[RMDB]
RNA sequence: GGGAACGACUCGAGUAGAGUCGAAAAUUCACUCGGCUUCGAGCCGCUGCUAGGAACAGCCUUCGUUACAUACUGCUCUUGACCGUGUGUAAGAGCCAAAUAUGCUUCCUCAAGUGACGCGUGCUCGUGAUACUAUUAAUUUCGAUUAAUAGUAUCAAAAAGAAACAACAACAACAAC
Reactivity to DMS in 0.01 (KOAc 150mM, MgCl2 10mM, bicine 150mM(pH8.5), 24C), signal-to-noise 9, nucleotides 027 to 126: u020u020c050a090c050u010c030g010g010c100u010u020c030g000a040g020c010c020g000c010u000g000c040u020a060g000g010a050a100c100a090g000c070c070u010u010c080g010u020u010a070c070a050u010a050c080u010g000c040u010c080u020u010g000a080c040c090g010u010g000u020g020u020a020a030g000a050g000c070c170a030a060a090u030a060u020g000c100u010u000c020c010u010c160a080a050g020u010g000a050c110g000c030g010u030g010c010u000c040g020
Reactivity to 2A3 in 0.01 (KOAc 150mM, MgCl2 10mM, bicine 150mM(pH8.5), 24C), signal-to-noise 9, nucleotides 027 to 126: u080u030c020a040c070u050c020g080g020c050u150u100c080g020a020g000c010c010g000c020u050g010c020u040a030g020g030a050a070c030a080g030c000c030u140u140c070g140u080u060a050c020a060u120a060c060u080g030c010u020c020u100u140g120a160c030c030g080u070g010u020g010u120a020a020g010a000g040c030c040a040a120a060u220a070u130g030c050u020u020c000c000u070c080a100a040g020u060g110a050c070g030c020g080u180g000c000u010c010g020
Background: The data come from the RNA Mapping Database (RMDB), library OK1LIB. Chemical mapping of a 177-nucleotide RNA with DMS and 2A3. The RNA was probed in 150 mM KOAc, 10 mM MgCl2 and 150 mM bicine (pH 8.5) at 24 C. For 2A3, 82,592 sequencing reads were counted. For DMS, 51,830 sequencing reads were counted. For DMS the reverse transcriptase was MarathonRT. For 2A3 the reverse transcriptase was SuperScript II with manganese.